[RMDB]
An RNA of 207 nucleotides, treated with DMS and 2A3 and read out base by base.

RNA sequence: GGGAACGACUCGAGUAGAGUCGAAAAGCUCACUGGGGAAGGGGAGCAUUCAUACCUCCUCAGCCUCCUCCAAGGGUCACUGUCAACUCAGGUGAUACUAGGCUGAGGAAAUGCAUUGCAAAGUGGCAUGCAGUGUGGCUGAGAGGCUUUGCAAGAACUAAUUACUGCCAUUCGUGGCAGUAAUUAGAAAAGAAACAACAACAACAAC
Reactivity to DMS in 0.01 (KOAc 150mM, MgCl2 10mM, bicine 150mM(pH8.5), 24C), signal-to-noise 2, nucleotides 027 to 156: g030c030u000c050a060c130u000g000g020g010g000a110a090g000g030g030g010a140g000c050a100u000u000c080a050u010a130c040c030u000c020c020u010c000a020g020c010c000u000c050c030u000c080c060a160a080g010g000g000u000c010a280c000u020g000u010c050a100a250c060u000c010a130g000g000u040g000a020u000a040c030u000a060g060g090c100u000g000a010g000g040a010a040a030u000g000c010a080u010u020g040c020a040a000a180g050u000g010g000c070a270u000g040c020a030g020u010g020u010g000g010c060u000g010a140g000a060g020g020c030u000u000u020g040c040a080a120g010a090a200
Reactivity to 2A3 in 0.01 (KOAc 150mM, MgCl2 10mM, bicine 150mM(pH8.5), 24C), signal-to-noise 4, nucleotides 027 to 156: g020c020u020c040a040c050u060g020g000g000g080a040a020g010g010g010g030a030g030c020a020u070u030c010a000u050a100c000c030u060c000c020u000c000a000g010c000c000u030c000c020u080c060c040a080a150g040g010g000u000c010a000c030u050g060u110c070a160a000c070u030c090a050g020g080u020g020a020u060a300c040u070a040g090g020c040u040g010a000g000g020a000a010a030u050g000c000a030u030u060g000c010a000a090a110g070u080g080g020c030a020u060g010c020a030g000u060g020u080g130g000c020u020g000a010g000a020g090g000c030u070u050u050g030c050a090a030g020a120a030